[RMDB]
RNA sequence: GGGAACGACUCGAGUAGAGUCGAAAAAGAUGGUCGCUACGGCGACCAUCAUGCCAUGUUGCACUAUCAGUAACUUAACAUCAAAGUAGUAAAUAAAAGAACCUGCCUCACCAGCAGGUUUUUUUAAUCUCAACAUUCUUUUCGAAGAAUGUUGAGAAAAAGAAACAACAACAACAAC
Reactivity to DMS in 0.01 (KOAc 150mM, MgCl2 10mM, bicine 150mM(pH8.5), 24C), signal-to-noise 2, nucleotides 027 to 126: a110g000a000u000g010g000u000c000g000c000u000a130c220g020g020c000g010a000c000c000a020u000c000a030u000g040c020c040a130u020g000u000u000g010c110a030c140u000a000u000c060a100g010u010a040a040c040u010u030a080a080c110a050u020c070a020a060a040g000u010a050g050u010a140a080a080u000a010a000a050a000g010a000a000c000c000u000g000c020c010u000c300a060c260c190a300g000c000a010g000g000u000u000u000u000u000u000u000a010a110